[RMDB]
RNA sequence: GGGAACGACUCGAGUAGAGUCGAAAAUACGGGUUCGCCCGUACAAUCGAUCCGAGUGAUGGAAUGGUAGACAUAACAUGCUUAAAACAUGUGGGCUUCAAGCUGUGAAGGUUCAAGUCCUUCUUCGGAUACCAUAUACACAGCAUUCGUGCUGUAAGAUAUUUCUAGGUUUCGACCUAGAAAUAUCAAAAGAAACAACAACAACAAC
Reactivity to DMS in 0.01 (KOAc 150mM, MgCl2 10mM, bicine 150mM(pH8.5), 24C), signal-to-noise 3, nucleotides 027 to 156: u010a000c010g030g010g000u000u000c300g070c000c000c010g000u010a000c020a060a250u000c030g000a040u000c030c000g010a080g020u000g000a110u020g020g010a070a080u010g020g020u000a050g010a220c050a120u010a120a100c020a010u000g030c020u000u000a130a050a040a030c000a030u010g030u010g000g020g000c020u000u000c070a070a120g020c040u000g030u000g010a040a020g020g020u000u010c130a120a300g010u000c000c010u000u000c020u000u000c020g000g000a110u000a060c040c010a050u000a170u000a140c110a040c030a020g000c010a120u000u000c190g030u000g000c010u030g010u000a040a190
Reactivity to 2A3 in 0.01 (KOAc 150mM, MgCl2 10mM, bicine 150mM(pH8.5), 24C), signal-to-noise 8, nucleotides 027 to 156: u040a000c010g000g000g050u030u050c200g110c040c000c000g000u010a020c040a020a120u110c090g050a010u000c000c010g000a010g040u020g010a020u030g010g040a040a020u070g200g070u130a020g010a020c010a020u060a040a000c000a000u030g020c030u120u240a080a110a020a010c010a010u020g000u040g010g020g010c010u200u190c220a150a070g000c020u020g000u020g050a020a030g020g000u030u030c020a020a010g010u010c000c000u000u010c000u010u020c000g000g000a010u010a090c000c020a040u120a030u090a180c100a000c000a050g020c000a020u030u090c180g070u040g010c000u000g020u030a040a040
Source: RMDB library ARCHII, as collected in RNAgym. An RNA of 207 nucleotides, treated with DMS and 2A3 and read out base by base. The reactions ran in a buffer of 150 mM KOAc, 10 mM MgCl2 and 150 mM bicine (pH 8.5), at 24 C. For 2A3 the reverse transcriptase was SuperScript II with manganese. Values cover nucleotides 27 to 156.